[RMDB]
Chemical mapping of a 177-nucleotide RNA with 2A3 and DMS.
RNA sequence: GGGAACGACUCGAGUAGAGUCGAAAAGAAGGACAUAACGCGAAGGAGCAGAGAGAAGACUGCAGUGACGCGAAUCACUAGAUGUCAACGACGGCAAGAGAGAGCCGAAGGAGACGAUCCUUAGGAGAGCGUAUAGGAGGUUCGCCUCCUAUACGCUAAAAGAAACAACAACAACAAC
Reactivity to 2A3 in 0.01 (KOAc 150mM, MgCl2 10mM, bicine 150mM(pH8.5), 24C), signal-to-noise 3, nucleotides 027 to 126: g080a050a010g080g010a000c000a120u220a120a050c080g040c020g060a140a040g100g050a050g000c000a000g050a000g030a000g020a190a000g040a070c000u010g000c010a060g010u030g140a000c010g000c020g080a010a020u040c000a010c090u050a010g010a150u060g030u010c000a000a010c060g020a040c010g010g000c050a270a000g040a020g000a000g000a020g180c000c000g000a000a000g000g000a000g010a010c030g040a030u030c030c000u100u030a030g070g040a090g030
Reactivity to DMS in 0.01 (KOAc 150mM, MgCl2 10mM, bicine 150mM(pH8.5), 24C), signal-to-noise 3, nucleotides 027 to 126: g020a060a100g000g000a100c110a120u030a080a030c030g010c020g010a100a070g000g030a230g030c060a050g000a190g050a090g000a060a080g000a160c020u000g020c070a010g010u020g010a110c010g020c060g050a140a150u000c220a050c130u000a090g000a110u010g010u000c000a030a170c020g020a290c050g000g000c040a000a030g020a170g020a140g000a120g000c040c000g020a000a200g050g000a280g000a010c080g010a080u010c040c000u010u000a090g020g000a090g000

For DMS, 3,064 sequencing reads were counted. For 2A3, 2,703 sequencing reads were counted. It was measured as part of the RMDB library OK1LIB.